Source: RMDB library OK3TST, as collected in RNAgym. Chemical mapping of a 207-nucleotide RNA with 2A3 and DMS. The DMS profile rests on 7,192 reads.
RNA sequence: GGGAACGACUCGAGUAGAGUCGAAAACACACUUCCCGGGAAGUGUGGCCUAACCCCGGUUAGGGACUGCUCCUGGCACAGCUAGCAGGAAGAGACUGGGAGCGCUGACUGGCGGGAUGGAUCGUAUGAUCAGCUGCCAGACAGAUCUAGCGUGCAACAUUAAAUAGGAUUUCGAUCCUAUUUAAUGAAAAGAAACAACAACAACAAC
Reactivity to 2A3 in 0.01 (KOAc 150mM, MgCl2 10mM, bicine 150mM(pH8.5), 24C), signal-to-noise 5, nucleotides 027 to 156: c020a000c000a000c000u020u010c010c070c030g070g260g000a010a000g000u000g000u000g010g000c010c000u030a050a050c010c010c010c050g110g050u050u130a040g050g010g030a030c050u100g000c000u000c000c010u040g100g000c020a030c030a040g000c010u010a000g010c000a000g060g070a110a020g070a010g040a070c000u020g000g000g000a010g000c020g000c000u000g000a050c000u000g000g000c020g020g020g050a080u090g190g010a010u010c040g060u300a140u300g010a000u010c000a000g030c000u010g000c010c000a000g010a030c000a000g010a010u000c010u010a010g010c010g010u020g000c000a060a050
Reactivity to DMS in 0.01 (KOAc 150mM, MgCl2 10mM, bicine 150mM(pH8.5), 24C), signal-to-noise 2, nucleotides 027 to 156: c010a030c010a000c020u010u000c010c050c220g010g010g010a030a040g020u000g000u000g010g000c050c060u000a110a100c010c010c080c080g050g010u000u000a030g000g030g000a100c060u000g010c020u000c020c020u010g010g000c030a110c060a120g010c030u010a100g010c070a100g000g000a100a130g010a230g000a120c010u000g000g010g030a080g010c050g010c000u000g010a130c010u010g000g000c030g010g000g000a130u010g020g010a030u000c000g010u000a090u020g010a020u000c000a230g010c030u000g030c000c000a040g010a130c030a040g010a060u010c030u000a070g000c020g010u000g000c050a100a210

The 2A3 profile rests on 5,142 reads.